[RMDB]
RNA sequence: GGGAACGACUCGAGUAGAGUCGAAAACAGGUCUAGUUCGCUAGACCUGAAAAAAGCGUACUACAGUGGAAGAGGUUCUACCCACCUCCCAAAUAGGAGAGGAACUCCCCACCUUCCCACUGUAUCGCAAAAACUCUCAUAGUUCGCUAUGAGAGAAUCAAAGGACAGGUUUCGACCUGUCCUUUGAAAAAGAAACAACAACAACAAC
Reactivity to DMS in 0.01 (KOAc 150mM, MgCl2 10mM, bicine 150mM(pH8.5), 24C), signal-to-noise 1, nucleotides 027 to 156: c000a050g040g000u010c000u000a000g000u000u010c260g010c010u010a000g020a020c000c000u010g010a000a040a090a140a100a110g010c030g060u000a070c100u000a040c000a040g060u000g020g040a080a110g010a050g020g000u010u010c060u000a050c040c010c000a210c110c000u020c020c010c000a130a120a240u000a150g010g000a060g000a090g020g030a100a130c060u000c020c000c010c070a140c020c010u000u000c060c010c010a090c020u000g000u000a010u010c010g000c010a030a060a060a100a140c010u000c000u000c000a000u000a010g000u000u010c300g000c000u000a020u000g000a020g000a000g010a050a050
Reactivity to 2A3 in 0.01 (KOAc 150mM, MgCl2 10mM, bicine 150mM(pH8.5), 24C), signal-to-noise 1, nucleotides 027 to 156: c000a010g070g000u020c010u000a000g020u060u150c090g010c090u000a000g010a000c000c000u000g000a020a010a000a000a000a000g040c050g040u070a130c120u000a000c020a090g000u030g000g060a150a110g040a120g010g060u220u000c110u130a110c050c050c000a100c000c000u010c010c040c060a130a260a300u230a140g000g090a140g020a080g110g050a070a050c160u090c000c010c000c010a040c000c000u060u060c030c030c000a000c000u000g000u000a000u100c010g040c010a000a000a000a000a180c020u000c000u000c000a020u000a000g020u000u050c200g060c300u010a000u020g000a000g010a000g020a000a010
Chemical mapping of a 207-nucleotide RNA with DMS and 2A3. For 2A3 the reverse transcriptase was SuperScript II with manganese. High 2A3 reactivity points to a flexible backbone, as in loops and unpaired stretches. For DMS the reverse transcriptase was MarathonRT. The data come from the RNA Mapping Database (RMDB), library RNAMAK.